[RMDB]
RNA sequence: GGGAACGACUCGAGUAGAGUCGAAAACAUCACUCCUGACGAUGGCUCUAAAGAUGUGUUCGUACACUUCUCUGCUAUCCAGAACGAUGGUUACAAAUCUCUGGACGAAGGUCAGAAAGUGUCCUUCCGCUGCAGUGCUAUUCGUAGCACUGCAGCGAAAAGAAACAACAACAACAAC
Reactivity to 2A3 in 0.01 (KOAc 150mM, MgCl2 10mM, bicine 150mM(pH8.5), 24C), signal-to-noise 2, nucleotides 027 to 126: c000a010u060c010a020c010u020c000c020u020g030a060c020g060a080u070g070g000c040u000c040u120a150a170a030g030a040u040g020u000g020u040u210c100g060u150a000c030a000c020u060u030c030u000c010u060g000c020u040a000u030c000c000a000g000a050a010c090g000a020u010g000g100u120u070a050c050a020a110a030u030c020u010c000u030g070g020a020c060g110a100a040g100g000u090c000a010g090a040a080a000g000u040g030u010c020c000u040u080c010
Reactivity to DMS in 0.01 (KOAc 150mM, MgCl2 10mM, bicine 150mM(pH8.5), 24C), signal-to-noise 2, nucleotides 027 to 126: c130a090u010c030a120c090u000c110c030u000g030a050c100g030a110u010g010g000c010u000c090u020a140a140a050g020a050u010g000u000g020u000u010c220g020u010a090c020a030c010u000u000c100u010c080u030g020c030u000a090u000c010c000a020g000a020a140c160g000a050u000g030g010u000u010a180c120a100a160a080u000c020u000c020u010g020g000a030c210g000a050a110g010g000u000c020a000g020a020a060a040g000u000g000u010c030c010u000u010c030
Chemical mapping of a 177-nucleotide RNA with 2A3 and DMS. The data come from the RNA Mapping Database (RMDB), library OK2TRN. Conditions: 150 mM KOAc, 10 mM MgCl2 and 150 mM bicine (pH 8.5), 24 C. 2A3 adducts were read by reverse transcription with SuperScript II with manganese. Values cover nucleotides 27 to 126. The DMS profile rests on 982 reads.